[RMDB]
RNA sequence: GGGAACGACUCGAGUAGAGUCGAAAAGGCAGGAAAACCACUUGAACCUAGGAGGCGGAUGUUGCAGUGAGCUGAGAUUGCGCCACCGCACUCCAGCUUGGGCGACAGAGUGAGACUCAUCUCAAAAAUUGCUUACAAUGUUCGCAUUGUAAGCAAUAAAAGAAACAACAACAACAAC
Reactivity to DMS in 0.01 (KOAc 150mM, MgCl2 10mM, bicine 150mM(pH8.5), 24C), signal-to-noise 6, nucleotides 027 to 126: g000g010c050a050g010g000a060a060a080a090c060c040a080c050u000u000g000a080a080c010c040u010a090g010g000a050g000g020c040g000g010a080u000g010u010u000g000c020a050g020u000g010a060g020c040u010g000a110g010a060u000u010g000c030g010c140c090a060c120c040g000c020a040c030u000c010c010a070g000c050u000u000g010g000g010c020g000a090c080a060g000a070g010u000g000a110g010a080c060u000c060a070u000c020u010c030a040a050a060a090
Reactivity to 2A3 in 0.01 (KOAc 150mM, MgCl2 10mM, bicine 150mM(pH8.5), 24C), signal-to-noise 2, nucleotides 027 to 126: g000g000c010a000g050g050a020a090a000a030c020c000a020c040u020u050g050a040a050c000c040u040a090g000g030a020g020g030c050g020g080a130u020g050u080u050g010c020a080g080u020g080a030g020c040u040g050a060g010a190u060u060g020c030g070c070c040a040c070c000g000c000a100c020u000c000c000a000g000c030u040u050g000g040g010c010g010a010c010a020g090a020g050u070g040a040g000a030c000u010c050a040u020c040u010c030a070a070a070a010